The record gives the reactivity of an RNA of 207 nucleotides to DMS and 2A3. Conditions: 150 mM KOAc, 10 mM MgCl2 and 150 mM bicine (pH 8.5), 24 C. 2A3 adducts were read by reverse transcription with SuperScript II with manganese. The data come from the RNA Mapping Database (RMDB), library M2RFPK. 2A3 is a SHAPE reagent: it acylates the 2'-hydroxyl of flexible nucleotides of all four kinds.

RNA sequence: GGGAACGACUCGAGUAGAGUCGAAAAACAAGUGGUGGUAGUCCGCCACUCUAAGGGGACGCCUUUAGAAGAAGAGGCUAGGGGGUAUUCCGGUGUGGGAUACUUCGUAAUAUGCAACGCUAAUUGCUCAAGGAUAGAUGAUUCGUCAUCUAUCCAACUCAUUCAACGUAUUCGUACGUUGAAUGAGAAAAGAAACAACAACAACAAC
Reactivity to DMS in 0.01 (KOAc 150mM, MgCl2 10mM, bicine 150mM(pH8.5), 24C), signal-to-noise 2, nucleotides 027 to 156: a020c070a090a080g030u000g040g000u000g000g010u000a090g000u000c000c000g000c000c010a070c010u000c000u000a060a050g030g000g020g020a150c240g020c020c000u000u010u020a070g030a110a130g000a150a050g020a150g030g000c020u020a170g020g010g000g020g010u010a040u010u000c010c060g010g030u010g060u030g000g000g020a020u000a020c020u020u010c020g000u000a090a150u000a140u030g140c060a060a060c020g030c030u010a070a090u000u000g010c010u010c100a070a120g040g010a060u000a010g000a050u000g020a060u000u010c300g000u010c020a000u000c010u000a020u000c000c000a000a050
Reactivity to 2A3 in 0.01 (KOAc 150mM, MgCl2 10mM, bicine 150mM(pH8.5), 24C), signal-to-noise 5, nucleotides 027 to 156: a000c160a180a050g010u010g000g000u010g040g150u030a010g010u010c000c000g000c000c000a010c020u000c000u010a010a000g030g010g000g050a030c090g190c010c000u010u000u020a030g000a050a000g010a000a010g050a090g010g000c020u040a020g000g000g000g000g030u010a010u010u000c060c030g200g080u290g060u270g130g020g000a010u010a010c000u000u030c010g000u050a060a110u110a090u260g020c030a060a020c090g030c130u170a130a140u090u080g000c030u050c140a120a090g010g000a000u000a000g020a010u020g000a000u020u090c170g060u010c080a000u000c000u000a000u000c000c000a000a000